An RNA of 177 nucleotides, treated with 2A3 and DMS and read out base by base. The 2A3 profile rests on 6,570 reads. DMS adducts were read by reverse transcription with MarathonRT. Reactivities are given for positions 27 through 126.

RNA sequence: GGGAACGACUCGAGUAGAGUCGAAAAGCCUUCUUCGUGCUGGUUGCGGCGCAGCAGGGCUGGAAAACGGUGCUCUCGCGCCUCUUUCCCCAGGUCAGCACCCCCAUCUACGAGCGCGAUACGCUGCUCGUGGGGAGGAUUUCGAUCCUCCCCACGAAAAAGAAACAACAACAACAAC
Reactivity to 2A3 in 0.01 (KOAc 150mM, MgCl2 10mM, bicine 150mM(pH8.5), 24C), signal-to-noise 4, nucleotides 027 to 126: g020c020c000u060u110c040u090u140c120g030u020g000c010u020g040g020u070u070g050c040g010g000c030g000c020a040g000c070a010g020g030g000c020u060g060g070a130a180a040a060c090g120g060u120g060c000u000c010u020c060g000c000g000c000c000u010c010u020u070u020c010c000c010c010a010g020g020u060c010a010g030c010a020c000c010c000c010c000a070u080c030u130a060c070g040a020g020c010g000c010g040a050u060a230c110g020c060u080g020c010
Reactivity to DMS in 0.01 (KOAc 150mM, MgCl2 10mM, bicine 150mM(pH8.5), 24C), signal-to-noise 6, nucleotides 027 to 126: g010c040c030u010u010c160u010u010c110g040u000g010c010u000g000g000u000u000g000c180g010g000c020g030c010a060g030c180a040g010g000g020c010u000g010g010a080a060a100a130c150g010g010u000g000c020u000c070u000c110g000c030g020c010c000u000c040u000u010u010c010c010c010c100a100g000g000u000c020a030g020c010a090c020c010c000c010c020a130u000c130u010a070c100g000a030g020c030g010c020g010a180u010a140c100g010c010u010g020c030